[RMDB]
RNA sequence: GGGAACGACUCGAGUAGAGUCGAAAAACAGUCAGUACGCUGACUGAGAGAAACGGGAGCCGGGCUUGGGACAAGAGCCAUCCCAAGUCCAAGGCCAAGUAGGCUCUAGUGAUGGUACGCCAUCACAAAAACUGGUCUACCUUCGGGUAGACCAGAAGAAACUGGAUGAGUUCGCUCAUCCAGUUUCAAAAGAAACAACAACAACAAC
Reactivity to 2A3 in 0.01 (KOAc 150mM, MgCl2 10mM, bicine 150mM(pH8.5), 24C), signal-to-noise 1, nucleotides 027 to 156: a000c000a000g020u010c000a010g030u060a040c180g010c100u000g010a010c000u000g000a010g010a000g010a030a140a040c060g030g080g040a090g050c060c060g020g010g000c010u000u000g000g000g000a000c030a070a060g000a000g000c000c000a010u010c010c000c000a000a000g020u000c010c010a050a020g000g000c000c000a040a010g030u100a110g080g010c010u000c000u020a030g000u000g000a000u000g020g000u020a040c190g040c030c000a000u010c000a000c010a000a070a000a000a000c010u010g000g000u000c000u000a000c000c030u090u070c210g060g010g000u000a000g000a000c000c000a010g000a000a000